An RNA of 177 nucleotides, treated with DMS and read out base by base.
The RNA was probed in 150 mM KOAc, 10 mM MgCl2 and 150 mM bicine (pH 8.5) at 24 C.
Values cover nucleotides 27 to 126.
RNA sequence: GGGAACGACUCGAGUAGAGUCGAAAAAGGAUAGGAUUCGUCCUAUCCUACACGAAAACCUCCUGGCGGUGCGGCGCCGGCCCCGCCGGGAAGGCCGCCUUAUUGGUAGCUGGUUCGCCAGCUACAACCAUUGCACCAUAUUCGUAUGGUGCAAUGGAAAAGAAACAACAACAACAAC
Reactivity to DMS in 0.01 (KOAc 150mM, MgCl2 10mM, bicine 150mM(pH8.5), 24C), signal-to-noise 2, nucleotides 027 to 126: a040g000g000a010u000a010g010g010a020u010u010c160g010u000c000c000u000a000u000c000c000u000a010c140a100c100g000a080a100a100a190c020c010u000c010c010u000g000g010c000g010g000u000g010c030g010g000c040g010c090c100g000g000c010c050c050c030g000c000c010g010g010g000a020a020g020g010c060c050g000c030c040u000u010a080u010u000g000g000u000a010g000c000u000g010g000u000u000c160g020c000c000a010g000c000u000a000c010a070a190